[RMDB]
RNA sequence: GGGAACGACUCGAGUAGAGUCGAAAACGCGGGCGCGUGCUGGCGUUAGUCGGCGGUAGCGGCAGCGGGAAAUCAUUAACCUGCGCCGCGACGCUGGGCAUUUUGCCCGCUGGCGUUCGCCAGACGACUCGAUAUGGUGAUUCGUCACCAUAUCGAGAAAAGAAACAACAACAACAAC
Reactivity to 2A3 in 0.01 (KOAc 150mM, MgCl2 10mM, bicine 150mM(pH8.5), 24C), signal-to-noise 2, nucleotides 027 to 126: c060g020c040g000g030g000c060g030c030g040u110g030c030u000g020g000c020g040u080u070a070g080u040c010g000g010c000g020g010u090a010g010c000g020g010c030a060g010c000g000g020g040a010a100a060u290c180a130u130u140a090a110c000c020u020g000c010g010c000c000g000c000g000a010c000g000c020u020g000g060g000c040a080u120u120u080u260g000c000c000c000g000c020u020g120g000c010g020u040u060c040g000c000c010a000g040a070c050g030a040
Reactivity to DMS in 0.01 (KOAc 150mM, MgCl2 10mM, bicine 150mM(pH8.5), 24C), signal-to-noise 2, nucleotides 027 to 126: c080g010c100g020g010g000c060g000c100g010u000g020c000u000g010g010c020g000u010u000a080g040u000c010g000g010c000g020g000u020a200g000c010g000g010c020a070g030c000g000g000g000a090a110a150u010c250a130u010u020a090a170c010c000u000g000c020g000c000c020g000c000g000a020c030g000c070u010g020g020g020c000a190u000u000u010u000g020c000c010c040g000c020u000g000g000c010g010u000u000c030g010c000c030a030g000a110c100g010a170
The data come from the RNA Mapping Database (RMDB), library OK2TST. An RNA of 177 nucleotides, treated with 2A3 and DMS and read out base by base. For 2A3 the reverse transcriptase was SuperScript II with manganese. Reactivities are given for positions 27 through 126. The RNA was probed in 150 mM KOAc, 10 mM MgCl2 and 150 mM bicine (pH 8.5) at 24 C.